This 177-nucleotide RNA was probed chemically with DMS and 2A3.
For DMS the reverse transcriptase was MarathonRT.
The RNA was probed in 150 mM KOAc, 10 mM MgCl2 and 150 mM bicine (pH 8.5) at 24 C.
Values are in units of 0.01, from 0 to 300, in steps of 10.
For 2A3, 4,168 sequencing reads were counted.
The DMS profile rests on 3,366 reads.
The data come from the RNA Mapping Database (RMDB), library TTRDES.

RNA sequence: GGGAACGACUCGAGUAGAGUCGAAAAAAGAUAUGGAAGCGAUACUCGCAUCGAUCUAUGGUGCAUGGUAUGGUCGGAAACGACCAUAUCUGUGAUGCCAUAGGGAGCGAGUCGCUUCCUAAGUCAAGUUCUGAUCAAACUUCGGUUUGAUCAGAACAAAAGAAACAACAACAACAAC
Reactivity to DMS in 0.01 (KOAc 150mM, MgCl2 10mM, bicine 150mM(pH8.5), 24C), signal-to-noise 2, nucleotides 027 to 126: a110a090g000a000u000a040u010g000g000a030a010g030c010g000a130u000a010c000u000c020g020c000a300u000c220g000a040u000c000u000a010u000g020g010u000g020c090a080u000g000g000u000a000u000g010g000u000c000g020g000a010a010a030c000g000a010c000c000a010u000a000u000c000u010g020u010g010a120u000g000c000c000a020u000a000g020g000g000a000g010c000g010a000g000u000c000g000c000u010u000c000c000u000a000a050g000u000c000a120a120
Reactivity to 2A3 in 0.01 (KOAc 150mM, MgCl2 10mM, bicine 150mM(pH8.5), 24C), signal-to-noise 2, nucleotides 027 to 126: a000a000g020a010u010a000u040g000g000a000a000g020c000g010a030u090a150c000u000c000g020c000a120u300c070g000a000u010c000u020a010u020g030g070u050g110c300a300u050g040g010u010a000u000g000g010u000c000g000g000a010a010a000c000g000a010c010c000a000u000a010u010c000u020g050u090g030a220u060g040c000c000a000u000a000g000g000g000a020g000c000g000a000g000u020c000g010c000u010u000c010c000u000a000a000g000u000c010a030a060